[RMDB]
RNA sequence: GGGAACGACUCGAGUAGAGUCGAAAAGUGCUCGGCGGUCGUGUUUUUCGAUGGUGUAUAUGUAUUAUGUGUAUGUGUAUGCAUGCCUGUCCAUGCGUCUCUCACCGAGGAUGUCGAGUCCUCAUGGGGACGUAUCGGGUUUCGACCCGAUACGUCCAAAAGAAACAACAACAACAAC
Reactivity to DMS in 0.01 (KOAc 150mM, MgCl2 10mM, bicine 150mM(pH8.5), 24C), signal-to-noise 1, nucleotides 027 to 126: g020u010g040c050u000c070g020g000c060g000g040u000c020g000u000g010u000u000u010u000u030c190g000a050u000g030g000u000g000u000a050u000a040u000g020u010a070u000u020a030u000g040u010g000u020a060u040g010u020g020u000a010u050g010c040a090u030g000c000c020u000g040u000c070c070a030u070g000c030g000u000c010u000c080u010c020a110c230c100g000a030g030g000a060u000g000u030c230g000a230g000u080c000c000u000c000a070u020g040g030
Reactivity to 2A3 in 0.01 (KOAc 150mM, MgCl2 10mM, bicine 150mM(pH8.5), 24C), signal-to-noise 2, nucleotides 027 to 126: g020u030g010c020u030c000g030g000c000g020g040u040c130g000u080g050u030u130u020u000u130c030g030a010u100g040g060u070g070u000a010u000a030u160g220u070a090u100u190a090u130g120u080g010u060a030u020g090u000g110u130a070u150g010c000a020u000g050c000c010u020g050u000c020c000a000u060g050c020g000u000c000u010c020u010c000a000c030c030g000a030g000g020a010u060g050u160c080g040a010g020u010c020c000u000c000a050u080g010g090
An RNA of 177 nucleotides, treated with DMS and 2A3 and read out base by base.
Reactivities are given for positions 27 through 126.
For 2A3 the reverse transcriptase was SuperScript II with manganese.
DMS adducts were read by reverse transcription with MarathonRT.
The data come from the RNA Mapping Database (RMDB), library OK1LIB.
The DMS profile rests on 1,537 reads.
Conditions: 150 mM KOAc, 10 mM MgCl2 and 150 mM bicine (pH 8.5), 24 C.